[RMDB]
RNA sequence: GGGAACGACUCGAGUAGAGUCGAAAACGCUGCCGUCGUCGCCCUCACCGCAACGGCUGCUGAACUGGGCUGCGUUCGCCGGUGAGGGCUGGCCACAGUGCCUGGGCGAUCCGGCGCUGAACCAGGCGCCCAUUAGGUGCUUCGGCACCUAAUGGGCAAAAGAAACAACAACAACAAC
Reactivity to 2A3 in 0.01 (KOAc 150mM, MgCl2 10mM, bicine 150mM(pH8.5), 24C), signal-to-noise 2, nucleotides 027 to 126: c060g000c060u150g010c040c020g040u050c030g020u020c000g040c010c000c000u010c000a000c000c000g050c000a000a000c050g300g140c020u030g020c010u040g030a160a180c160u260g110g010g000c000u040g030c010g030u020u050c120g040c170c130g030g000u010g000a000g000g000g000c000u010g000g000c010c000a210c040a060g090u170g080c010c010u120g040g000g000c040g020a040u090c010c030g010g000c000g000c030u010g040a030a050c010c000a010g040g000c020
Reactivity to DMS in 0.01 (KOAc 150mM, MgCl2 10mM, bicine 150mM(pH8.5), 24C), signal-to-noise 2, nucleotides 027 to 126: c200g000c010u050g000c080c080g030u020c070g060u010c000g020c000c010c000u000c000a000c000c010g020c000a020a000c030g030g000c020u000g020c000u000g010a150a170c250u060g020g000g050c030u000g000c000g020u000u000c120g030c120c030g050g000u030g000a000g000g010g010c000u000g000g020c000c030a150c250a120g010u080g010c000c010u040g000g000g000c060g000a030u000c300c020g010g000c010g000c010u020g030a220a120c040c050a110g040g020c190